RNA sequence: GGGAACGACUCGAGUAGAGUCGAAAAAGCUGCCAGCACUAAGGCGGACGGCGUAGUCGCGAUAGCAGCGUUCCGCUGUCGUCUCCACUGCAAGAACGUACGGUGUUGAGGCCCUGUCCGCCGCUGCGCUGCCACCUACUCUCGCGCCGCUAGUCGACGUGUUACAUUAGUUCGCUAAUGUAACACGAAAAGAAACAACAACAACAAC
Reactivity to DMS in 0.01 (KOAc 150mM, MgCl2 10mM, bicine 150mM(pH8.5), 24C), signal-to-noise 2, nucleotides 027 to 156: a130g030c020u000g020c040c020a080g030c040a100c000u000a110a120g030g010c020g010g000a070c030g000g020c100g040u010a070g010u010c080g030c030g020a150u010a080g040c010a170g020c040g010u020u000c050c070g040c010u020g040u000c030g000u000c000u010c030c060a070c010u000g000c000a150a110g000a090a100c180g030u000a080c010g020g000u000g030u000u010g020a120g010g020c050c050c000u010g030u000c030c060g000c000c000g010c160u010g030c060g030c020u000g000c030c040a080c030c040u000a090c040u000c020u000c050g020c060g000c000c020g020c040u010a130g010u010c020g020a300
Reactivity to 2A3 in 0.01 (KOAc 150mM, MgCl2 10mM, bicine 150mM(pH8.5), 24C), signal-to-noise 8, nucleotides 027 to 156: a010g020c040u030g020c020c010a010g020c020a030c180u300a130a110g010g000c020g000g000a020c010g000g020c090g040u100a060g090u100c060g000c030g040a050u070a060g050c080a000g010c030g070u130u020c040c070g000c020u040g040u090c020g020u020c020u010c030c010a020c010u050g020c080a110a130g080a280a070c070g070u260a040c020g030g040u050g030u100u240g030a030g020g030c000c000c060u060g000u010c000c000g000c000c020g000c010u000g000c030g000c020u030g010c010c010a030c000c010u040a060c020u010c000u020c030g020c010g030c040c020g020c090u060a030g060u090c030g030a060
The record gives the reactivity of an RNA of 207 nucleotides to DMS and 2A3. 2A3 adducts were read by reverse transcription with SuperScript II with manganese. Conditions: 150 mM KOAc, 10 mM MgCl2 and 150 mM bicine (pH 8.5), 24 C. The data come from the RNA Mapping Database (RMDB), library VIROID. The DMS profile rests on 5,010 reads.